[RMDB]
RNA sequence: GGGAACGACUCGAGUAGAGUCGAAAAUCACGCGCAACGAUUGCCUGCGCAAAGCCGGUUCCGGCGUCAAUCGGAGAUGUCCAGGGAAUGUUGUUGCCGACAUUGACCACAUAGCCGCCGCCCUCUUGAUAGCCGAUCCUUUCGAGGAUCGGCUAUCAAAAGAAACAACAACAACAAC
Reactivity to 2A3 in 0.01 (KOAc 150mM, MgCl2 10mM, bicine 150mM(pH8.5), 24C), signal-to-noise 1, nucleotides 027 to 126: u120c000a000c050g070c000g050c000a000a040c050g200a110u070u080g150c010c000u090g000c090g010c000a150a190a000g140c020c000g020g020u240u000c100c030g040g010c080g060u070c000a000a050u030c000g040g000a090g000a080u050g130u090c000c000a010g000g050g000a000a190u110g020u000u150g050u000u100g000c000c000g030a040c080a100u000u030g000a080c020c020a000c000a140u260a000g000c050c000g030c050c010g000c070c000c000u050c000u000u000
Notes
Structure probing data (2A3) for a 177-nucleotide construct. The data come from the RNA Mapping Database (RMDB), library OK1LIB.